[RMDB]
This 177-nucleotide RNA was probed chemically with DMS and 2A3. Values cover nucleotides 27 to 126.
RNA sequence: GGGAACGACUCGAGUAGAGUCGAAAAGAUAUGGAAAUUCUGUGGAGUUGCUCGGAAACGAGGCAACGUUGAAACAGGUUUCCUAAGUCAAAAGGGGAGAUUUGUAGUUCGCUACAAAUCUCCCCAACACCAGUAAGAUCUUCGGAUCUUACUGGUGAAAAGAAACAACAACAACAAC
Reactivity to DMS in 0.01 (KOAc 150mM, MgCl2 10mM, bicine 150mM(pH8.5), 24C), signal-to-noise 2, nucleotides 027 to 126: g000a030u010a300u010g010g010a010a000a010u000u010c020u000g000u000g000g010a070g000u000u000g000c000u000c010g000g010a070a070a200c000g030a040g000g010c000a000a000c000g020u000u010g010a150a180a010c020a020g000g000u000u000u000c000c000u000a020a100g000u000c030a090a070a110a110g010g010g010g000a020g000a010u000u000u000g000u000a010g040u000u020c280g020c000u020a010c010a010a010a000u000c010u010c000c000c020c010a010a030
Reactivity to 2A3 in 0.01 (KOAc 150mM, MgCl2 10mM, bicine 150mM(pH8.5), 24C), signal-to-noise 2, nucleotides 027 to 126: g020a000u100a060u150g040g250a020a020a010u300u300c000u000g000u020g000g020a000g010u000u000g000c030u030c040g040g000a050a090a080c020g030a070g180g050c000a000a000c010g090u170u100g010a000a000a000c000a000g030g020u000u000u030c000c010u010a130a000g080u090c030a020a080a190a280g030g000g030g010a010g000a000u000u000u000g000u000a030g000u070u130c300g030c130u000a010c000a000a000a010u010c010u000c010c000c020c000a000a000
Record summary: For DMS the reverse transcriptase was MarathonRT. The DMS profile rests on 1,958 reads. The reactions ran in a buffer of 150 mM KOAc, 10 mM MgCl2 and 150 mM bicine (pH 8.5), at 24 C.